Notes
An RNA of 177 nucleotides, treated with DMS and 2A3 and read out base by base. The 2A3 profile rests on 1,715 reads. DMS adducts were read by reverse transcription with MarathonRT.
[RMDB]
RNA sequence: GGGAACGACUCGAGUAGAGUCGAAAAAGCAGCAAUCGUCUGCUCAGAGGACUUCGUGAGGCGUCACGGUCUCGAGGGCCAGGCUGUAGAAAUUGCGGGGAUGUGCAUGGAGACAGACGACCUUCGGUCUGGGGUAAUGUUUCGACAUUACCCCAGAAAAAGAAACAACAACAACAAC
Reactivity to DMS in 0.01 (KOAc 150mM, MgCl2 10mM, bicine 150mM(pH8.5), 24C), signal-to-noise 2, nucleotides 027 to 126: a050g020c020a040g020c020a160a090u010c220g010u020c000u000g040c010u010c080a140g000a180g010g000a090c080u000u000c060g020u020g010a020g030g020c070g000u010c050a050c120g020g010u000c010u010c040g000a130g000g000g010c020c020a080g000g020c030u010g010u000a050g000a060a090a120u000u020g000c000g000g000g010g010a120u000g010u000g020c050a090u000g000g010a100g000a050c020a050g000a040c030g000a120c080c020u000u000c060g000g000
Reactivity to 2A3 in 0.01 (KOAc 150mM, MgCl2 10mM, bicine 150mM(pH8.5), 24C), signal-to-noise 2, nucleotides 027 to 126: a000g030c070a030g000c040a050a280u190c060g200u030c020u010g080c000u000c030a100g070a080g110g050a020c000u090u030c160g060u050g090a030g040g050c040g040u040c030a030c130g030g010u050c010u040c030g070a140g040g040g000c000c010a040g090g000c000u020g010u060a020g060a060a230a090u190u100g020c050g000g000g010g050a010u030g050u110g060c040a030u030g090g010a020g000a040c040a050g010a000c000g190a300c000c000u050u050c030g040g000